[RMDB]
RNA sequence: GGGAACGACUCGAGUAGAGUCGAAAACGCUGGGUUCCCAUGGUAAGACAUGCUGGGUACUGAAGCGCGCACGGUAUUCAGCAACAGCUUACCCGCUGGGAACCUGUGCUGAAGCGCGCACGGCAACCGAAAGGUGCGAUUUACCGUUUCGACGGUACGUUUAGACGUACUUCGGUACGUCUAAACGAAAAGAAACAACAACAACAAC
Reactivity to 2A3 in 0.01 (KOAc 150mM, MgCl2 10mM, bicine 150mM(pH8.5), 24C), signal-to-noise 1, nucleotides 027 to 156: c030g000c000u010g000g000g020u000u000c020c010c020a020u130g020g000u010a000a000g050a160c080a300u160g000c010u000g000g000g010u000a000c010u010g070a240a060g020c010g010c010g000c010a010c000g010g000u000a000u000u020c000a000g000c030a050a050c020a010g010c000u000u000a000c000c010c000g010c010u000g000g000g000a000a000c000c000u000g010u020g010c040u130g030a140a040g000c000g020c010g030c020a020c020g100g000c030a170a210c040c010g080a130a060a020g040g000u020g010c030g010a010u080u030u070a020c010c020g010u030u130u130c160g090a040c000g010g000u020a030
Reactivity to DMS in 0.01 (KOAc 150mM, MgCl2 10mM, bicine 150mM(pH8.5), 24C), signal-to-noise 2, nucleotides 027 to 156: c030g000c020u000g000g010g020u010u000c010c010c010a080u000g010g030u000a010a020g020a060c060a270u000g030c020u000g020g000g010u000a020c000u000g000a040a130g030c000g010c040g040c000a300c060g000g010u000a000u000u010c000a060g000c040a060a070c090a180g000c030u000u000a050c000c020c100g000c190u020g000g000g020a060a000c060c030u000g000u000g010c000u000g000a070a110g050c020g000c000g040c010a160c060g000g010c140a110a140c010c020g000a110a110a250g020g010u000g000c010g010a200u020u000u000a020c010c000g010u000u000u000c300g000a050c010g000g010u030a000
This 207-nucleotide RNA was probed chemically with 2A3 and DMS. The RNA was probed in 150 mM KOAc, 10 mM MgCl2 and 150 mM bicine (pH 8.5) at 24 C. Values cover nucleotides 27 to 156. For DMS, 2,878 sequencing reads were counted.